[RMDB]
An RNA of 207 nucleotides, treated with DMS and 2A3 and read out base by base. The reactions ran in a buffer of 150 mM KOAc, 10 mM MgCl2 and 150 mM bicine (pH 8.5), at 24 C. 2A3 adducts were read by reverse transcription with SuperScript II with manganese.
RNA sequence: GGGAACGACUCGAGUAGAGUCGAAAAUGAGUUACUAUCUCUGCUACUAAACUGUUGCUUAUAAUGUUACUUGUAGCAACAUUAUAUGAUGAAUGAACACUCAAAAAUGUCUCUGCACAUUCCAGCUUGGUCCAUCUGUACAUGGUCAUCCGUUGGAUCACAAGAGUUAUUUCGAUAACUCUUGUGAAAAAGAAACAACAACAACAAC
Reactivity to DMS in 0.01 (KOAc 150mM, MgCl2 10mM, bicine 150mM(pH8.5), 24C), signal-to-noise 4, nucleotides 027 to 156: u000g010a090g020u000u000a110c100u000a080u000c020u000c010u000g000c040u000a230c060u000a060a100a130c090u000g010u000u000g010c020u000u010a020u000a010a010u000g000u010u010a020c020u010u010g020u010a140g030c010a010a020c000a020u010u010a020u010a040u000g010a120u000g030a060a080u000g030a110a050c040a040c020u010c050a040a080a100a130a090u000g020u000c030u000c050u000g020c080a090c030a120u000u010c020c030a060g020c020u010u000g020g000u000c060c010a060u000c030u000g020u000a090c110a070u000g000g000u010c020a050u010c020c030g010u000u000g020g010a150
Reactivity to 2A3 in 0.01 (KOAc 150mM, MgCl2 10mM, bicine 150mM(pH8.5), 24C), signal-to-noise 9, nucleotides 027 to 156: u070g010a010g020u040u080a060c040u060a050u080c030u010c030u080g060c020u030a050c020u080a090a130a090c070u090g030u070u030g010c020u100u070a030u050a120a060u100g070u120u090a100c080u100u110g080u180a010g040c020a000a000c000a020u050u080a090u030a050u130g120a040u080g030a060a050u060g020a060a020c020a010c060u020c010a030a060a030a030a040u070g050u020c030u000c040u120g030c100a040c020a110u070u050c000c000a010g010c040u060u090g030g000u030c010c010a040u040c080u140g090u070a060c030a100u030g010g010u030c030a050u040c050c030g020u020u020g040g010a030